[RMDB]
This 177-nucleotide RNA was probed chemically with 2A3. The data come from the RNA Mapping Database (RMDB), library OK1LIB. Conditions: 150 mM KOAc, 10 mM MgCl2 and 150 mM bicine (pH 8.5), 24 C.

RNA sequence: GGGAACGACUCGAGUAGAGUCGAAAAGAAUUGGUAUGUAAGCUACUCCUUCCGGUAGCUGCGUCACACUUUAAGAGUGUGCAUACUGAGCCGAAGCUCAGCUUCGGUCCCCCAAGGGAAGAACAAAGACCCACCCGUCAUUCGUGACGGGUGGGUCAAAAGAAACAACAACAACAAC
Reactivity to 2A3 in 0.01 (KOAc 150mM, MgCl2 10mM, bicine 150mM(pH8.5), 24C), signal-to-noise 1, nucleotides 027 to 126: g090a010a180u010u010g000g000u010a000u030g020u000a040a000g020c000u000a000c000u020c020c000u000u000c000c000g030g000u000a000g000c000u000g000c000g000u000c000a000c000a000c000u010u150u200a300a000g300a020g300u000g000u000g000c000a000u000a000c000u000g000a000g000c000c000g000a020a000g000c030u060c300a000g000c000u000u000c000g000g000u030c000c000c000c000c000a020a030g000g010g010a000a000g000a000a000c240a040a030a010